[RMDB]
RNA sequence: GGGAACGACUCGAGUAGAGUCGAAAAGGGAGCUUCGGCUCCCACCACGAUAUGGAAGUGAACUACCACUGUCACUGCGAAGAACGUAAGUCGGAAACGACUUACGGGAGCAGAAGUCAGUGGCACUUCCUAAGUCCAUUCACCUCUUCGGAGGUAACAACUACGCCUAUUUCGAUAGGCGUAGUUGAAAAGAAACAACAACAACAAC
Reactivity to DMS in 0.01 (KOAc 150mM, MgCl2 10mM, bicine 150mM(pH8.5), 24C), signal-to-noise 1, nucleotides 027 to 156: g000g060g020a040g050c030u000u000c300g090g030c000u000c000c010c000a000c010c020a030c000g000a210u020a280u000g010g000a120a000g010u000g020a120a060c020u010a170c000c010a050c020u040g000u000c020a300c000u020g000c020g020a080a140g020a130a160c000g030u000a030a060g000u000c020g010g000a230a080a300c020g060a050c000u000u000a000c040g000g000g010a200g020c010a090g000a040a120g020u000c010a010g010u000g020g020c000a000c020u020u010c000c020u000a020a090g000u000c020c010a090u010u000c120a070c020c000u000c020u000u000c290g010g020a000g000g000u020a020a110
Reactivity to 2A3 in 0.01 (KOAc 150mM, MgCl2 10mM, bicine 150mM(pH8.5), 24C), signal-to-noise 4, nucleotides 027 to 156: g010g010g020a020g000c020u090u110c230g100g000c000u040c010c010c000a000c010c000a000c000g050a020u070a030u120g010g000a000a000g010u020g020a070a050c080u130a120c300c000a000c000u010g000u020c000a010c080u000g000c010g150a300a020g020a080a000c010g010u000a000a010g000u000c000g000g020a060a040a060c010g000a000c010u000u000a000c000g000g000g000a010g000c000a000g010a140a050g030u020c000a000g010u000g000g000c000a000c000u000u000c000c000u000a010a000g010u000c030c010a080u200u200c080a030c030c000u030c010u090u090c290g140g000a000g000g000u010a020a030